[RMDB]
RNA sequence: GGGAACGACUCGAGUAGAGUCGAAAACAAGUGGUUUAUUCUCUGGACACUAGUAUUUGCUUUCUUUUUCUUUUUAAUGUUGUUAGGUUGUAAGAAUGUGUUAAUAGUGCAACAGAAGCUACCAGAACUAAAAACAAGGUUUUCUUGACUACCUCAAGUUUUAUACCGUGUUCGCACGGUAUAAAACAAAAGAAACAACAACAACAAC
Reactivity to DMS in 0.01 (KOAc 150mM, MgCl2 10mM, bicine 150mM(pH8.5), 24C), signal-to-noise 1, nucleotides 027 to 156: c050a090a140g000u000g010g010u010u000u000a030u030u000c060u010c040u010g040g000a120c030a060c100u000a040g010u000a040u000u010u000g010c030u010u000u000c000u010u010u000u000u010c010u030u010u010u000u020a110a120u010g030u020u000g020u000u000a100g020g000u010u000g000u020a000a100g010a090a060u000g030u000g050u020u010a040a140u000a050g010u000g000c030a040a120c070a050g000a040a130g020c070u000a050c000c030a120g010a040a130c040u000a050a030a120a060a090c070a070a130g020g020u010u010u000u000c040u000u000g010a110c070u000a040c050c010u020c050a040a250
Reactivity to 2A3 in 0.01 (KOAc 150mM, MgCl2 10mM, bicine 150mM(pH8.5), 24C), signal-to-noise 1, nucleotides 027 to 156: c040a030a070g020u020g020g070u100u070u070a090u250u000c020u010c010u080g060g000a020c010a000c070u020a080g000u110a290u080u070u110g010c040u030u070u000c030u040u150u150u060u080c010u040u140u170u040u140a110a200u180g010u000u000g020u030u040a080g130g000u040u050g040u030a000a030g030a060a040u020g080u000g000u010u000a040a000u070a110g020u010g040c000a120a010c000a130g070a000a000g060c030u040a040c000c020a020g040a190a030c030u110a060a010a050a000a000c020a040a020g080g000u000u040u020u060c000u040u020g060a090c070u080a050c030c020u090c080a160a030

Source: RMDB library OK3TST, as collected in RNAgym. The record gives the reactivity of an RNA of 207 nucleotides to DMS and 2A3. Values are in units of 0.01, from 0 to 300, in steps of 10. 2A3 adducts were read by reverse transcription with SuperScript II with manganese. Values cover nucleotides 27 to 156. DMS (dimethyl sulfate) methylates the pairing face of unpaired adenines and cytosines. The DMS profile rests on 2,111 reads.